Structure probing data (2A3 and DMS) for a 177-nucleotide construct. DMS adducts were read by reverse transcription with MarathonRT. It was measured as part of the RMDB library OK1LIB. The 2A3 profile rests on 104,081 reads. Reactivities are given for positions 27 through 126.
[RMDB]
RNA sequence: GGGAACGACUCGAGUAGAGUCGAAAAACUAGUAUGUACAGGGGUGAGUUGACCUGUCAUCUAGACUGCUGACCAUCAACUCACCGGUCAGCUGCAUGAUGUCCACAGAGUACGACAUCAGUACUCAGACUAAGGAUGCGUUCGCGUAUCUUUAGUCAAAAGAAACAACAACAACAAC
Reactivity to 2A3 in 0.01 (KOAc 150mM, MgCl2 10mM, bicine 150mM(pH8.5), 24C), signal-to-noise 9, nucleotides 027 to 126: a000c010u010a010g070u140a050u040g060u090a010c000a010g030g020g030g030u130g090a110g060u070u080g100a070c000c010u000g000u000c000a000u000c000u010a020g070a120c050u040g000c000u010g000a000c010c000a030u110c040a040a090c060u030c090a060c020c050g000g000u000c000a010g000c010u010g000c000a070u090g030a040u050g050u030c020c010a070c050a090g040a010g040u050a020c050g060a020c070a130u090c020a030g010u010a010c010u010c040a010
Reactivity to DMS in 0.01 (KOAc 150mM, MgCl2 10mM, bicine 150mM(pH8.5), 24C), signal-to-noise 9, nucleotides 027 to 126: a180c010u000a000g000u050a000u000g000u050a000c000a010g010g000g000g020u010g010a040g020u000u000g010a070c020c020u000g000u000c010a010u000c000u000a010g000a270c050u000g000c010u010g000a020c010c050a140u020c070a030a050c060u000c060a080c150c130g000g000u000c000a000g010c010u000g000c090a100u010g000a070u010g010u000c010c050a100c200a110g010a050g010u010a030c060g000a120c150a090u030c100a070g010u000a020c010u000c030a180